[RMDB]
An RNA of 207 nucleotides, treated with 2A3 and DMS and read out base by base. Source: RMDB library RNAMAK, as collected in RNAgym. Values cover nucleotides 27 to 156.
RNA sequence: GGGAACGACUCGAGUAGAGUCGAAAACGCAUAGUUCGCUAUGCGAAAAAACCUUUGUGGACAGAACAGUAUUGUCAGCGAUUGAUCCCAUUGGGAUUAAAGCUUGGAUUUAUACUACCCUGUCCACUCUGGUAAAAAACAGUAGUUCGCUACUGAACUGACAAUCACUAUUCGUAGUGAUUGUCAGAAAAGAAACAACAACAACAAC
Reactivity to 2A3 in 0.01 (KOAc 150mM, MgCl2 10mM, bicine 150mM(pH8.5), 24C), signal-to-noise 7, nucleotides 027 to 156: c010g000c000a000u010a000g020u070u080c220g030c120u000a010u010g000c000g060a130a010a000a000a000a010c010c000u010u010u010g000u000g000g010a000c010a000g030a130a040c050a080g010u010a010u020u020g010u020c000a000g000c020g110a160u030u040g000a000u000c000c020c110a300u230u300g000g000g000a000u000u010a010a010a010g000c000u070u130g100g010a030u160u300u090a010u050a000c000u030a030c040c010c000u000g000u000c000c000a000c000u000c000u000g000g000u120a140a100a020a010a000a020c010a000g010u020a000g010u050u110c250g010c160u010a000c000u010g040a070a050
Reactivity to DMS in 0.01 (KOAc 150mM, MgCl2 10mM, bicine 150mM(pH8.5), 24C), signal-to-noise 1, nucleotides 027 to 156: c030g030c010a020u010a030g010u010u000c300g050c000u000a010u000g020c010g020a010a030a070a120a120a050c010c010u000u000u000g050u010g020g000a030c000a020g020a040a040c020a030g030u000a030u000u000g010u000c000a030g010c000g030a300u000u010g010a010u020c000c000c010a300u020u010g050g020g010a010u000u000a000a080a240g020c000u000u000g050g020a060u000u000u000a040u010a020c000u000a090c050c030c000u000g000u010c000c000a000c000u000c020u010g000g010u000a010a060a080a080a080a130c050a020g010u000a040g020u000u000c250g020c020u000a030c020u000g000a110a210